Structure probing data (2A3 and DMS) for a 170-nucleotide construct. For DMS, 13,691 sequencing reads were counted. 2A3 is a SHAPE reagent: it acylates the 2'-hydroxyl of flexible nucleotides of all four kinds. Values cover nucleotides 27 to 129. The reactions ran in a buffer of 150 mM KOAc, 10 mM MgCl2 and 150 mM bicine (pH 8.5), at 24 C. For DMS the reverse transcriptase was MarathonRT.
RNA sequence: GGGAACGACUCGAGUAGAGUCGAAAAUUGAAGGUAAAACAGCCUGUGGGUGAAACACACCCACAGGGCCCAUUGGGCGGUAGCACUCUGGUAUCACGGUACCUUUGUGCGCCUGUUUUACCGAAGGGCAGAAUCGGCUUCGGCCGAUUCAAAAGAAACAACAACAACAAC
Reactivity to 2A3 in 0.01 (KOAc 150mM, MgCl2 10mM, bicine 150mM(pH8.5), 24C), signal-to-noise 2, nucleotides 027 to 129: u130u090g110a110a000g000g000u000a020a000a000a000c000a000g030c000c000u000g000u010g000g030g000u000g040a030a070a010c130a010c000a000c040c000c000a000c000a000g010g000g000c010c000c010a030u280u300g000g000g000c070g010g090u070a050g000c000a000c000u010c000u030g000g000u000a010u040c010a020c130g170g010u000a000c000c000u000u000u000g020u020g000c000g020c000c000u000g000u020u000u000u000a000c000c000g000a010a010g000g000g040c050a000
Reactivity to DMS in 0.01 (KOAc 150mM, MgCl2 10mM, bicine 150mM(pH8.5), 24C), signal-to-noise 4, nucleotides 027 to 129: u000u000g010a200a140g010g020u010a000a040a000a030c020a000g020c040c010u020g020u030g000g000g070u040g030a100a210a060c300a250c040a000c000c000c000a020c020a030g040g010g030c040c020c020a020u040u070g020g000g040c020g000g100u000a040g010c010a050c020u020c040u030g010g000u020a000u000c060a150c220g060g030u000a020c000c010u000u000u000g000u040g030c050g010c040c010u010g000u000u000u000u000a030c000c000g020a010a160g000g010g000c150a070